[RMDB]
RNA sequence: GGGAACGACUCGAGUAGAGUCGAAAAGAAUGGAAAGGGAUUGUAGAGAUCAGUGUCGCAGCAUUCUCAAUUAGAUUAGGCCGGGCUUCUGUAUAUGGUUACGUGCGACAGAUACUGGUGCGAAGAAGGGAUAUAUAUACUUCGGUAUAUAUAUCCCAAAAGAAACAACAACAACAAC
Reactivity to DMS in 0.01 (KOAc 150mM, MgCl2 10mM, bicine 150mM(pH8.5), 24C), signal-to-noise 7, nucleotides 027 to 126: g000a090a060u020g000g000a030a060a090g000g000g000a100u010u000g010u010a060g010a110g010a040u010c020a050g010u010g010u000c010g000c030a090g010c070a080u010u000c020u000c040a070a120u030u030a090g010a090u020u030a070g000g020c020c030g000g000g000c070u010u010c030u010g010u020a050u020a060u020g000g010u000u020a050c120g020u010g010c040g010a030c040a080g010a100u030a060c050u000g000g020u000g020c070g010a080a080g010a120a110
Reactivity to 2A3 in 0.01 (KOAc 150mM, MgCl2 10mM, bicine 150mM(pH8.5), 24C), signal-to-noise 6, nucleotides 027 to 126: g010a040a030u130g010g070a060a050a050g060g010g060a050u090u120g050u120a040g020a010g000a080u040c040a030g040u010g050u070c030g000c020a010g030c020a070u140u000c030u020c020a050a250u120u110a040g030a060u070u100a020g050g000c000c000g020g020g010c030u060u010c010u030g090u030a090u020a050u200g080g010u040u050a050c070g030u050g030c020g010a010c010a020g000a010u060a050c010u030g000g030u050g110c070g030a030a040g050a060a070
An RNA of 177 nucleotides, treated with DMS and 2A3 and read out base by base. 2A3 adducts were read by reverse transcription with SuperScript II with manganese. Values cover nucleotides 27 to 126. Values are in units of 0.01, from 0 to 300, in steps of 10.